[RMDB]
RNA sequence: GGGAACGACUCGAGUAGAGUCGAAAAGAUAUGGAGACUCGCGUGCAAGGAUGGCAAUCUAGUACACCAUCGGAAACGAUGGUGUACUAGAUUGUUCAUCUGAUGACCACGAAACGUCUCCUAAGUCGUCACCUAAUUACUUCGGUAAUUAGGUGACAAAAGAAACAACAACAACAAC
Reactivity to DMS in 0.01 (KOAc 150mM, MgCl2 10mM, bicine 150mM(pH8.5), 24C), signal-to-noise 1, nucleotides 027 to 126: g000a140u010a280u000g010g000a010g000a000c000u000c300g000c020g000u000g010c000a140a180g000g000a010u000g000g000c010a000a000u000c000u000a010g010u000a030c000a000c000c000a000u010c020g020g000a170a160a200c000g000a000u000g000g020u000g000u000a000c000u000a010g000a000u020u000g010u000u010c000a010u000c000u000g000a040u020g000a220c300c010a020c020g000a010a110a090c280g000u020c010u000c000c010u000a010a090g000u000c100